Conditions: 150 mM KOAc, 10 mM MgCl2 and 150 mM bicine (pH 8.5), 24 C. Structure probing data (2A3) for a 207-nucleotide construct.
[RMDB]
RNA sequence: GGGAACGACUCGAGUAGAGUCGAAAAGCUCUGGAAUUGAGGCCCCUCUAACAAUAAUCCAAAACUACUUCGCAUAGUAAUCUGCCGAAUCGUAGGAUGCCCAUUACUAUCUAUUUUUGGAGCAUCUAAAACUGUCAGUGCUUCGGCACUGACAGAACAUAUCCUGGCUCUUCGGAGCCAGGAUAUGAAAAGAAACAACAACAACAAC
Reactivity to 2A3 in 0.01 (KOAc 150mM, MgCl2 10mM, bicine 150mM(pH8.5), 24C), signal-to-noise 1, nucleotides 027 to 156: g030c000u000c010u030g070g070a160a130u090u030g010a070g020g040c000c000c000c030u050c050u160a100a150c030a100a070u190a040a010u060c050c010a060a070a060a110c020u050a020c020u070u000c080g000c040a010u020a050g100u130a160a040u050c020u030g000c010c020g070a010a110u110c040g040u040a060g130g000a000u010g000c000c010c010a000u020u050a050c020u050a050u210c060u100a200u130u000u030u020u000g020g010a090g040c000a000u000c010u040a030a030a000a120c000u010g000u000c000a000g000u000g030c000u060u120c110g090g000c020a010c010u000g000a000c000a010g000a000a000